[RMDB]
RNA sequence: GGGAACGACUCGAGUAGAGUCGAAAAAGUCUGUUGUCUCAAGGAUUGGAGACUCCAUCUUUACAGGCUGUACUGGCUCUUGGAACAAGGUCACUCAAAUUGCUAACAUGUUCUUGGAACAGACUCACGUCGCGCACGUAUUCGUACGUGCGCGACGAAAAGAAACAACAACAACAAC
Reactivity to 2A3 in 0.01 (KOAc 150mM, MgCl2 10mM, bicine 150mM(pH8.5), 24C), signal-to-noise 1, nucleotides 027 to 126: a000g030u050c060u060g150u080u080g130u030c020u000c010a000a140g000g050a280u160u300g000g010a020g000a040c040u060c140c010a120u010c030u040u250u180a090c090a050g000g000c030u040g000u100a080c090u100g000g060c060u000c000u050u030g070g000a010a050c030a060a060g090g000u060c000a100c000u100c060a130a280a210u170u300g040c010u110a140a100c000a130u040g000u120u010c030u000u000g000g040a060a000c000a000g020a290c000u020c100a080
This 177-nucleotide RNA was probed chemically with 2A3.
High 2A3 reactivity points to a flexible backbone, as in loops and unpaired stretches.
The RNA was probed in 150 mM KOAc, 10 mM MgCl2 and 150 mM bicine (pH 8.5) at 24 C.
For 2A3, 330 sequencing reads were counted.